[RMDB]
RNA sequence: GGGAACGACUCGAGUAGAGUCGAAAAUGAUUGCAUCACCUUUAUUACUUAUGAAUAGCGUGGUUGUACCACCUUAGUGUGCUUUAUAUUAUAGCUUAUGAAGAGCAGGGAGAACCAUUACAAUGCCCUAUUGGUUGGAGUUCGCUCCAACCAAUAGAAAAGAAACAACAACAACAAC
Reactivity to 2A3 in 0.01 (KOAc 150mM, MgCl2 10mM, bicine 150mM(pH8.5), 24C), signal-to-noise 8, nucleotides 027 to 126: u110g020a050u060u090g010c030a050u030c040a090c000c030u070u080u100a150u090u090a080c090u120u140a070u250g230a220a090u090a110g040c040g040u020g000g030u040u140g060u180a100c000c000a030c010c020u030u030a080g030u040g030u040g100c000u060u110u040a170u030a050u240u130a070u110a130g020c030u080u020a040u150g090a060a050g020a030g040c070a060g010g040g000a070g040a060a050c010c000a020u020u030a040c060a110a120u170g020c000c000
Reactivity to DMS in 0.01 (KOAc 150mM, MgCl2 10mM, bicine 150mM(pH8.5), 24C), signal-to-noise 5, nucleotides 027 to 126: u020g000a070u000u020g020c090a300u010c030a060c040c030u000u010u030a050u040u020a050c080u030u030a040u020g000a100a060u010a050g010c170g020u010g010g000u010u020g010u010a300c060c040a050c040c020u000u000a050g010u010g010u010g000c010u000u020u010a060u010a100u020u040a060u020a110g010c090u000u030a050u000g020a060a070g000a050g030c030a040g020g020g000a110g010a050a050c030c010a020u030u010a030c130a070a070u040g000c050c040